Structure probing data (2A3 and DMS) for a 207-nucleotide construct. Reactivities are rounded to 0.1 and cut off at 0 and 3. The DMS profile rests on 2,892 reads.
RNA sequence: GGGAACGACUCGAGUAGAGUCGAAAAAUACAAGGGGAGGUUUCGGCCAAAUGUUGUAUGCAGAAAGCGUGAGGAAGGUAGCACUUAGAGACUCACGAGUAGCGGUUCGGCAGUAGUGCUAAAAUGAGACAGUACGAAAAGUUCGCUUUUCGUACAACAUCAUAUCCGACUUCGGUCGGAUAUGAUGAAAAGAAACAACAACAACAAC
Reactivity to 2A3 in 0.01 (KOAc 150mM, MgCl2 10mM, bicine 150mM(pH8.5), 24C), signal-to-noise 2, nucleotides 027 to 156: a000u180a030c050a030a040g010g000g000g010a050g030g050u030u080u130c080g040g000c040c050a080a080a040u110g010u070u040g040u070a100u080g000c010a000g090a060a060a000g030c010g020u040g020a010g010g010a110a010g030g020u070a000g010c000a020c070u040u070a020g040a000g020a080c000u010c020a020c060g000a020g030u040a010g020c030g040g000u020u040c020g020g000c010a020g020u110a010g000u030g030c000u020a030a070a070a040u130g000a060g020a050c050a070g010u000a000c000g000a000a010a000a000g000u020u070c150g040c050u000u010u000u010c000g000u000a000c000a000a000
Reactivity to DMS in 0.01 (KOAc 150mM, MgCl2 10mM, bicine 150mM(pH8.5), 24C), signal-to-noise 1, nucleotides 027 to 156: a090u000a020c050a110a050g010g000g000g000a070g030g020u000u000u000c030g010g000c040c020a050a060a140u010g000u000u000g000u000a090u000g030c000a080g050a070a080a040g030c090g010u000g010a060g030g020a040a090g020g030u000a080g060c030a090c010u030u020a130g010a190g000a060c030u000c000a070c010g020a090g040u000a040g050c020g040g000u010u000c030g000g000c030a060g000u000a020g010u000g000c030u000a030a030a060a100u000g000a250g000a080c080a090g000u000a000c000g010a010a030a010a030g010u000u000c280g000c050u000u000u000u010c000g020u000a010c010a030a100